[RMDB]
RNA sequence: GGGAACGACUCGAGUAGAGUCGAAAAACAGUCAGUACGCUGACUGAGGGAAACGGGAGCCGGGCUUGGGACAAGAGCCAUUCCAAGUCCAAGGCCAAGUAGGCUCUAGUGAUGGUACGCCAUCACAAAAACUGGUCUACCUUCGGGUAGACCAGAAUCCACUAUUGUUCUUCGGAACAAUAGUGGAAAAAGAAACAACAACAACAAC
Reactivity to 2A3 in 0.01 (KOAc 150mM, MgCl2 10mM, bicine 150mM(pH8.5), 24C), signal-to-noise 1, nucleotides 027 to 156: a020c000a000g000u000c000a000g010u040a070c240g030c150u000g000a010c000u010g000a060g020g050g000a110a160a180c140g000g030g040a070g020c040c030g000g020g000c000u010u000g000g000g020a010c030a040a050g000a000g030c010c000a010u010u000c000c000a010a010g010u000c010c030a120a050g040g000c010c030a090a030g100u150a150g030g000c000u010c010u040a050g000u000g020a010u000g000g010u040a020c240g010c040c000a000u010c000a000c020a000a070a000a010a000c000u030g020g000u000c000u010a000c000c000u000u050c160g070g000g000u000a000g000a020c000c000a000g010a010a000